[RMDB]
RNA sequence: GGGAACGACUCGAGUAGAGUCGAAAAUCCCGAUACGAUUAUUCGGGGUCAGCUGUUUGUAAGUCCCGUAUUCAACUUGUGCCGCACAGGGCAGGUUGAGGGCCAGACACUGCGCUAUCCCGCAGGGUAACUUAUUUCUGUUCGCAGAAAUAAGUUAAAAAGAAACAACAACAACAAC
Reactivity to 2A3 in 0.01 (KOAc 150mM, MgCl2 10mM, bicine 150mM(pH8.5), 24C), signal-to-noise 9, nucleotides 027 to 126: u020c000c000c000g000a030u090a090c060g050a070u070u210a090u100u170c010g010g000g000g010u020c020a010g010c160u030g030u030u040u020g050u080a090a050g110u170c000c000c010g020u090a130u040u060c000a010a010c000u010u020g020u140g300c010c020g110c060a180c110a250g000g010g000c000a000g010g000u000u000g010a050g000g000g000c000c000a010g000a020c010a000c020u040g020c050g000c080u040a080u080c010c000c010g000c030a050g030g070g030
Reactivity to DMS in 0.01 (KOAc 150mM, MgCl2 10mM, bicine 150mM(pH8.5), 24C), signal-to-noise 9, nucleotides 027 to 126: u010c000c000c000g010a070u020a060c230g000a150u030u010a070u020u010c000g010g000g000g010u010c050a040g010c140u010g010u000u000u000g010u010a040a050g020u030c000c010c020g020u030a110u040u000c010a010a010c010u000u000g020u010g020c000c000g000c290a130c260a180g000g000g000c000a000g010g010u000u000g000a040g000g010g020c020c300a020g000a020c010a040c030u010g010c130g010c090u010a080u010c030c030c010g010c140a070g010g010g010
An RNA of 177 nucleotides, treated with 2A3 and DMS and read out base by base.
It was measured as part of the RMDB libraries RFM100 and RFMREP.
For DMS the reverse transcriptase was MarathonRT.
The reactions ran in a buffer of 150 mM KOAc, 10 mM MgCl2 and 150 mM bicine (pH 8.5), at 24 C.